Chemical mapping of a 177-nucleotide RNA with 2A3. The 2A3 profile rests on 309 reads. The reactions ran in a buffer of 150 mM KOAc, 10 mM MgCl2 and 150 mM bicine (pH 8.5), at 24 C.
RNA sequence: GGGAACGACUCGAGUAGAGUCGAAAAAGCAAAACCUUCAUAUCUAUCCUUGUUUCUAAACCAGUCUCAUAGAUAUGAAGGCUUUGUUUCUGAUGAAGGAUUGUGGGAUUGUUGCUUAACACUGAUGCGCAGCUAUAGGGUUCGCCCUAUAGCUGCGAAAAGAAACAACAACAACAAC
Reactivity to 2A3 in 0.01 (KOAc 150mM, MgCl2 10mM, bicine 150mM(pH8.5), 24C), signal-to-noise 1, nucleotides 027 to 126: a000g030c030a040a000a000a030c090c000u110u010c000a000u090a000u020c000u000a000u000c010c010u030u030g000u130u120u060c270u180a110a050a000c000c010a000g060u020c000u020c150a020u000a090g000a020u000a020u020g000a020a010g000g030c000u000u030u000g000u000u040u040c090u080g190a240u050g120a030a040g150g020a180u000u000g040u140g110g000g240a230u000u070g060u090u030g050c080u000u230a030a000c130a090c080u090g000a050u190g130